This 207-nucleotide RNA was probed chemically with 2A3 and DMS.
For 2A3 the reverse transcriptase was SuperScript II with manganese.
The reactions ran in a buffer of 150 mM KOAc, 10 mM MgCl2 and 150 mM bicine (pH 8.5), at 24 C.
For 2A3, 1,158 sequencing reads were counted.
Values cover nucleotides 27 to 156.
RNA sequence: GGGAACGACUCGAGUAGAGUCGAAAAGGUAAUGGACGACGGCGGCGUGUGGCGAACAGGGAUACCGGUUGUCAGUGUCUGGAACAUCCCAAGGGGCGGCGGAGCUAGCACCCCGACACGUUAAGGCAAAACUUCGCACGGUUCGCCGUGCGAAGAACAGUAUCCUCCAGUUCGCUGGAGGAUACUGAAAAGAAACAACAACAACAAC
Reactivity to 2A3 in 0.01 (KOAc 150mM, MgCl2 10mM, bicine 150mM(pH8.5), 24C), signal-to-noise 1, nucleotides 027 to 156: g030g000u090a020a080u140g020g010a020c030g010a010c060g020g000c010g010g020c020g010u070g000u030g020g060c030g010a060a040c050a100g050g000g000a010u040a070c050c000g010g010u040u040g040u030c030a020g030u030g020u080c020u020g020g000a010a000c010a080u030c020c000c030a050a080g000g020g000g030c040g000g020c010g050g000a050g020c080u050a020g010c050a100c010c000c000c010g010a000c020a020c050g050u070u120a070a030g040g000c020a030a040a000a130c000u000u010c000g000c010a000c000g000g060u020u020c180g020c070c000g020u010g000c000g000a000a000g000a010a010
Reactivity to DMS in 0.01 (KOAc 150mM, MgCl2 10mM, bicine 150mM(pH8.5), 24C), signal-to-noise 1, nucleotides 027 to 156: g000g050u010a040a110u010g000g000a100c040g000a010c080g030g040c130g010g030c100g040u010g030u010g050g000c070g010a040a170c050a070g020g040g000a090u000a020c010c010g020g000u000u000g030u010c030a060g030u000g000u010c070u010g010g050a030a150c070a130u010c010c010c020a090a210g000g000g020g040c060g000g010c000g000g010a070g010c050u000a140g050c060a110c020c000c010c040g000a040c100a010c080g000u000u000a100a140g010g010c030a070a070a090a180c000u000u000c000g020c000a040c010g020g000u000u000c300g040c040c000g030u000g030c060g000a000a000g010a030a050